[RMDB]
RNA sequence: GGGAACGACUCGAGUAGAGUCGAAAAUACAUGAACAGAGUCCCUAGGGAUAUUAAGCCUCUUGGAAUUGCUCUGACUAUGUUAUCAAUGCGCUAUCAGCAAUCCAAAGGAGGACCGCCUAGCUGCAUCGCCAUGUCAUUUUCGAAUGACAUGGCGAAAAAGAAACAACAACAACAAC
Reactivity to 2A3 in 0.01 (KOAc 150mM, MgCl2 10mM, bicine 150mM(pH8.5), 24C), signal-to-noise 1, nucleotides 027 to 126: u080a000c030a020u070g050a100a020c020a040g080a010g080u020c000c010c000u000a000g040g000g010a060u050a030u300u170a130a180g000c020c000u010c020u000u000g040g060a220a050u070u020g010c010u010c010u060g050a060c090u130a040u180g000u020u070a230u150c110a170a090u180g000c020g010c020u010a030u120c040a000g010c000a000a000u000c000c010a060a060a020g210g020a030g000g000a030c010c040g080c000c010u000a010g020c050u020g000c070a040
Reactivity to DMS in 0.01 (KOAc 150mM, MgCl2 10mM, bicine 150mM(pH8.5), 24C), signal-to-noise 1, nucleotides 027 to 126: u010a110c040a100u040g000a080a070c050a000g010a070g000u000c150c040c040u010a020g020g010g010a110u010a100u040u010a100a130g000c010c000u000c060u000u010g010g000a040a150u000u010g010c060u010c110u000g000a040c050u010a040u030g000u000u000a240u010c150a080a100u010g010c190g000c050u010a040u010c160a070g000c010a070a060u000c000c000a050a150a160g040g000a080g000g000a020c150c050g030c000c030u000a030g010c020u000g010c050a070